[RMDB]
Chemical mapping of a 177-nucleotide RNA with DMS and 2A3.
Source: RMDB libraries RFM100 and RFMREP, as collected in RNAgym.
Conditions: 150 mM KOAc, 10 mM MgCl2 and 150 mM bicine (pH 8.5), 24 C.
For DMS the reverse transcriptase was MarathonRT.
RNA sequence: GGGAACGACUCGAGUAGAGUCGAAAAGACUAAAACCGAAGACCGCAGGGGUCUGGCUGAGACAUAAUCUUCCUGCCGAGGUUUGCGAAGUCCAUCCGUUGCGAUUGGGCGAUCGCCCCGGCACCCUUCUUGAGAAUAAUUUCGAUUAUUCUCAAGAAAAAGAAACAACAACAACAAC
Reactivity to DMS in 0.01 (KOAc 150mM, MgCl2 10mM, bicine 150mM(pH8.5), 24C), signal-to-noise 6, nucleotides 027 to 126: g010a100c060u020a070a090a090a100c050c020g010a090a050g010a030c090c070g010c160a110g000g000g010g000u000c010u000g010g010c080u000g000a090g010a070c120a080u020a070a090u010c050u010u010c030c060u000g020c010c010g000a100g000g010u020u050u020g020c020g000a040a200g000u000c000c000a030u000c010c010g030u020u040g010c140g000a030u020u020g040g000g010c000g000a070u000c000g000c010c000c000c000g000g010c040a060c060c050c040u010
Reactivity to 2A3 in 0.01 (KOAc 150mM, MgCl2 10mM, bicine 150mM(pH8.5), 24C), signal-to-noise 9, nucleotides 027 to 126: g040a010c050u120a030a020a040a050c020c020g070a090a010g030a030c010c030g040c170a110g050g190g000g010u000c010u010g030g020c060u070g050a020g030a080c040a060u190a080a070u090c020u070u020c020c020u010g000c000c000g070a210g060g020u160u200u120g000c000g010a010a000g010u000c000c000a000u000c010c040g270u170u270g020c110g040a010u070u140g010g000g000c040g050a220u040c000g000c010c000c000c000g000g000c010a040c020c010c000u010